[RMDB]
RNA sequence: GGGAACGACUCGAGUAGAGUCGAAAAACCCCUUCAGCGAACAGAAGAGCCCCGCACGGGAUAGGAGUAAGACCAUAGCGAUGGGGGGAGAUGCUAGGAGUUGGGGGAGACCGAAGCGAGGAGGAAAAAAGGAACACCUUCGGGUGUUCCAAAAGAAACAACAACAACAAC
Reactivity to 2A3 in 0.01 (KOAc 150mM, MgCl2 10mM, bicine 150mM(pH8.5), 24C), signal-to-noise 2, nucleotides 027 to 129: a060c000c000c000c000u030u030c000a070g030c000g050a000a000c000a000g060a040a000g010a050g000c000c020c040c020g120c040a040c000g000g020g000a040u070a090g000g010a020g040u120a040a110g080a010c000c000a130u160a100g070c010g070a080u070g000g000g000g020g040g000a020g020a020u040g000c100u030a060g020g040a020g040u200u130g000g000g000g000g000a000g020a020c000c010g000a020a000g040c000g000a010g070g000a000g000g000a000a010a000a000a120a000
Reactivity to DMS in 0.01 (KOAc 150mM, MgCl2 10mM, bicine 150mM(pH8.5), 24C), signal-to-noise 2, nucleotides 027 to 129: a110c020c000c040c100u030u000c110a080g080c050g020a100a000c040a030g000a100a110g000a040g080c180c030c060c000g070c110a010c160g020g020g010a050u120a030g010g030a000g030u100a110a150g050a170c000c010a020u020a080g010c070g000a000u050g000g000g050g040g000g000a020g030a090u020g000c060u040a020g000g000a080g010u050u080g000g040g050g070g040a130g010a200c140c000g000a010a030g030c100g000a110g000g040a040g000g000a000a000a000a160a000a160
Chemical mapping of a 170-nucleotide RNA with 2A3 and DMS. For DMS the reverse transcriptase was MarathonRT. For 2A3, 2,140 sequencing reads were counted. Values cover nucleotides 27 to 129. For DMS, 2,393 sequencing reads were counted. The RNA was probed in 150 mM KOAc, 10 mM MgCl2 and 150 mM bicine (pH 8.5) at 24 C.